[RMDB]
RNA sequence: GGGAACGACUCGAGUAGAGUCGAAAAGCCGAUCGCCGCCGACGCGCUCGCGUUCCGGCCCGGCAACGUCGAGUUCGAGCUGUUGACGCCCGCGCAAUUCUCGAUCUACGGGGUGGUCGUGCGCGGACCAUUUUACGCCUUUCGAGGCGUAAAAUGGAAAAGAAACAACAACAACAAC
Reactivity to 2A3 in 0.01 (KOAc 150mM, MgCl2 10mM, bicine 150mM(pH8.5), 24C), signal-to-noise 1, nucleotides 027 to 126: g040c010c000g000a110u080c050g030c020c010g130c070c020g060a040c010g020c000g040c100u120c140g010c040g050u090u020c030c010g000g060c000c050c000g060g010c040a040a020c040g220u150c040g030a040g040u060u030c020g000a000g000c060u040g030u090u100g000a040c030g000c060c050c010g010c000g000c020a050a240u250u010c010u070c100g070a100u000c040u050a040c070g000g010g070g000u000g000g040u030c040g050u090g000c020g030c000g000g000a000
Reactivity to DMS in 0.01 (KOAc 150mM, MgCl2 10mM, bicine 150mM(pH8.5), 24C), signal-to-noise 2, nucleotides 027 to 126: g000c000c040g020a070u020c140g020c020c000g000c110c100g040a080c090g000c060g010c140u000c250g010c070g020u000u010c170c020g000g010c050c060c030g020g000c090a040a060c100g030u000c050g020a050g010u000u000c010g000a060g020c060u000g000u000u000g010a080c080g000c000c020c050g000c010g020c010a050a110u000u000c090u010c080g010a060u000c050u000a170c030g020g020g000g030u010g000g000u000c020g030u000g010c030g000c030g010g000a160
An RNA of 177 nucleotides, treated with 2A3 and DMS and read out base by base. For 2A3, 1,480 sequencing reads were counted. Reactivities are rounded to 0.1 and cut off at 0 and 3. Conditions: 150 mM KOAc, 10 mM MgCl2 and 150 mM bicine (pH 8.5), 24 C. The DMS profile rests on 1,872 reads. For DMS the reverse transcriptase was MarathonRT. It was measured as part of the RMDB library OK2TST.